[RMDB]
Annotation:
This 207-nucleotide RNA was probed chemically with DMS and 2A3. The 2A3 profile rests on 3,871 reads. 2A3 is a SHAPE reagent: it acylates the 2'-hydroxyl of flexible nucleotides of all four kinds. Reactivities are given for positions 27 through 156. DMS adducts were read by reverse transcription with MarathonRT. The DMS profile rests on 2,984 reads. The data come from the RNA Mapping Database (RMDB), library M2RFOK. The RNA was probed in 150 mM KOAc, 10 mM MgCl2 and 150 mM bicine (pH 8.5) at 24 C.
RNA sequence: GGGAACGACUCGAGUAGAGUCGAAAAACAGAAAAAAGGAGUUUAAAUUAGAUUUGCAAACGGACGGUACUAAAUACCGACACUUUUACGUCUAACUUAUCGUUAACUCUGCAAAAAGAAAACAAGAAAAACAAGCGUGAGUUCGCUCACGCUUGAACAGUUAUAGCAUGUUCGCAUGCUAUAACUGAAAAGAAACAACAACAACAAC
Reactivity to DMS in 0.01 (KOAc 150mM, MgCl2 10mM, bicine 150mM(pH8.5), 24C), signal-to-noise 2, nucleotides 027 to 156: a100c030a210g020a000a040a090a050a150a160g020g000a090g010u020u000u000a010a020a060u000u000a030g010a090u010u010u000g040c020a010a010a050c080g000g010a130c000g040g030u000a090c020u000a100a040a300u000a000c010c000g000a140c050a030c010u010u000u010u000a010c020g030u000c000u000a010a010c010u000u000a060u000c130g010u000u000a040a020c020u010c010u000g000c070a030a070a060a070a070g000a090a040a030a080c110a040a110g000a040a080a070a140a060c010a010a000g060c000g020u010g000a030g040u000u020c300g020c030u010c000a000c000g030c020u000u000g000a020a110
Reactivity to 2A3 in 0.01 (KOAc 150mM, MgCl2 10mM, bicine 150mM(pH8.5), 24C), signal-to-noise 5, nucleotides 027 to 156: a000c030a020g120a030a060a000a000a020a030g060g000a040g020u090u090u140a080a130a070u110u080a040g030a050u050u070u170g040c060a050a030a010c030g030g060a010c000g000g020u010a030c050u200a100a090a120u060a020c010c020g050a010c030a070c100u050u130u100u110a020c010g000u000c010u030a050a060c030u050u090a040u170c030g040u020u040a020a020c010u010c020u070g010c030a100a030a050a040a010g090a030a050a020a010c070a060a050g110a100a130a030a020a020c000a000a000g010c000g000u000g000a010g010u040u050c070g030c060u000c000a000c010g020c000u000u010g000a000a000